RNA sequence: GGGAACGACUCGAGUAGAGUCGAAAAUGCAUAUCGAGUUCCCAUGUAGAGAGAUAUCCCUGCGGCUGUAAAAUUAUAUAUAUAUAAGAAUUAUAUCUAACGAUAGCUAGCCGCAGGCGGUGUGUUCGCGCACCGAAAAGAAACAACAACAACAAC
Reactivity to DMS in 0.01 (KOAc 150mM, MgCl2 10mM, bicine 150mM(pH8.5), 24C), signal-to-noise 2, nucleotides 027 to 135: u030g020c110a050u030a080u030c030g000a170g020u000u000c000c010c010a130u020g010u010a090g010a130g010a140g000a070u010a020u000c110c000c010u000g010c010g010g030c000u000g000u010a020a040a130a120u000u000a000u000a030u000a010u000a000u000a130u030a070a300g010a280a110u010u010a010u010a000u000c030u020a040a040c070g010a090u020a090g000c070u050a030g000c020c000g000c010a010g020g010c030g010g010u010g010u010g000u010u040c150g030c040g040c040a000c050c030g010a060